[RMDB]
Notes:
Chemical mapping of a 177-nucleotide RNA with DMS and 2A3. For 2A3, 11,600 sequencing reads were counted. Source: RMDB library OK2TRN, as collected in RNAgym. DMS (dimethyl sulfate) methylates the pairing face of unpaired adenines and cytosines. Values are in units of 0.01, from 0 to 300, in steps of 10.
RNA sequence: GGGAACGACUCGAGUAGAGUCGAAAACUUUGGCCCGCCUGGACAGCAACCCGUGAUUGGGUUUGUGAAAAGAUUCAAGGUUCUUGGAAACCCUCGGUGCCAAUGAGGGUGGAACCAUGACACUCUCUAACCUUACUUGAUUCGUCAAGUAAGGUUAAAAAGAAACAACAACAACAAC
Reactivity to DMS in 0.01 (KOAc 150mM, MgCl2 10mM, bicine 150mM(pH8.5), 24C), signal-to-noise 9, nucleotides 027 to 126: c090u000u000u000g000g010c020c030c040g000c130c050u000g010g010a150c090a250g010c030a040a030c020c000c010g020u000g020a150u010u020g000g010g000u000u010u010g030u000g000a090a090a120a070g010a110u000u000c040a060a080g010g000u000u000c020u000u010g020g000a140a130a100c020c010c020u000c010g010g010u010g020c150c170a070a090u010g010a020g000g000g010u000g000g000a070a060c020c020a060u000g010a110c180a080c070u000c040u000c060
Reactivity to 2A3 in 0.01 (KOAc 150mM, MgCl2 10mM, bicine 150mM(pH8.5), 24C), signal-to-noise 6, nucleotides 027 to 126: c010u100u040u090g050g000c000c000c010g010c020c040u050g020g050a030c020a050g020c000a030a020c010c000c010g050u070g080a140u090u220g010g000g020u080u090u080g020u000g030a050a050a010a030g070a070u080u070c030a050a040g050g010u040u030c010u070u110g130g050a140a110a060c010c000c010u010c030g060g060u190g110c030c030a040a100u100g000a000g000g030g000u020g010g020a040a020c010c010a010u040g030a010c030a000c040u050c000u000c020